Overview:
Structure probing data (DMS and 2A3) for a 177-nucleotide construct. For 2A3, 6,666 sequencing reads were counted. The reactions ran in a buffer of 150 mM KOAc, 10 mM MgCl2 and 150 mM bicine (pH 8.5), at 24 C. For DMS, 2,630 sequencing reads were counted. Values are in units of 0.01, from 0 to 300, in steps of 10.
RNA sequence: GGGAACGACUCGAGUAGAGUCGAAAAGAUAUGGACUACAUCUAGUUGAGUCGUACAGUCGGAAACGACUGUACCGACAAUGAUGCUAGAGUGUAGUCCUAAGUCAAAAGUUCAGCUUCGGCUGAACGUCUACUCAAGCGUUCGCGCUUGAGUAGACAAAAGAAACAACAACAACAAC
Reactivity to DMS in 0.01 (KOAc 150mM, MgCl2 10mM, bicine 150mM(pH8.5), 24C), signal-to-noise 3, nucleotides 027 to 126: g000a030u000a300u000g000g010a000c020u000a000c000a070u010c000u000a000g030u010u000g010a150g000u010c000g010u000a010c000a010g000u000c010g020g000a080a060a180c010g010a030c020u000g000u000a010c090c050g040a000c000a160a230u000g020a130u010g000c000u000a010g000a080g020u010g010u000a000g000u000c000c000u010a010a060g050u010c060a080a080a110a200g010u000u000c000a000g010c000u000u020c300g040g020c000u010g010a010a000c020
Reactivity to 2A3 in 0.01 (KOAc 150mM, MgCl2 10mM, bicine 150mM(pH8.5), 24C), signal-to-noise 3, nucleotides 027 to 126: g030a010u050a050u190g010g000a000c010u010a000c000a020u050c010u010a000g010u040u120g140a020g060u020c000g020u000a000c000a000g020u000c000g040g030a060a060a040c000g000a000c000u020g000u010a000c010c010g000a000c020a120a300u230g120a070u300g000c010u000a020g050a050g130u130g000u010a000g000u030c000c010u000a010a010g050u010c000a050a030a110a180g020u000u000c000a010g000c000u040u230c300g220g000c000u010g000a010a000c000
The data come from the RNA Mapping Database (RMDB), library TTRDES. 2A3 adducts were read by reverse transcription with SuperScript II with manganese. Reactivities are given for positions 27 through 126.